[RMDB]
RNA sequence: GGGAACGACUCGAGUAGAGUCGAAAACUUAAAGUCUGUCCUUUAAUUCAUUACCCAUUUUCCUUUUCUUACUGUUGAAGUGUUUCAAAGGAGAAUCAAGAUGAAUCGAUAAUUCUAAACGUAUUUGUUCAUUGCCUGGCUCAGCGUCAUGUGAGCACUACGUCCACUCAUUCGUGAGUGGACGUAGAAAAGAAACAACAACAACAAC
Reactivity to 2A3 in 0.01 (KOAc 150mM, MgCl2 10mM, bicine 150mM(pH8.5), 24C), signal-to-noise 1, nucleotides 027 to 156: c000u020u020a000a000a120g070u110c180u180g120u160c010c010u110u070u070a070a040u100u100c000a070u060u120a090c050c010c000a010u050u060u060u080c030c020u060u020u090u190c070u130u140a150c040u060g060u050u060g040a040a050g000u000g010u060u070u010c120a180a070a000g030g010a010g060a030a010u080c150a130a090g050a080u010g000a000a010u060c040g030a030u030a050a010u180u160c110u300a070a090a030c100g080u060a000u010u000u080g000u000u000c030a080u100u110g030c000c070u040g080g000c020u010c000a070g000c030g230u060c100a050u120g080u080g030a000g000c000a000
Structure probing data (2A3) for a 207-nucleotide construct. The RNA was probed in 150 mM KOAc, 10 mM MgCl2 and 150 mM bicine (pH 8.5) at 24 C. Source: RMDB library OK3TST, as collected in RNAgym. For 2A3, 336 sequencing reads were counted.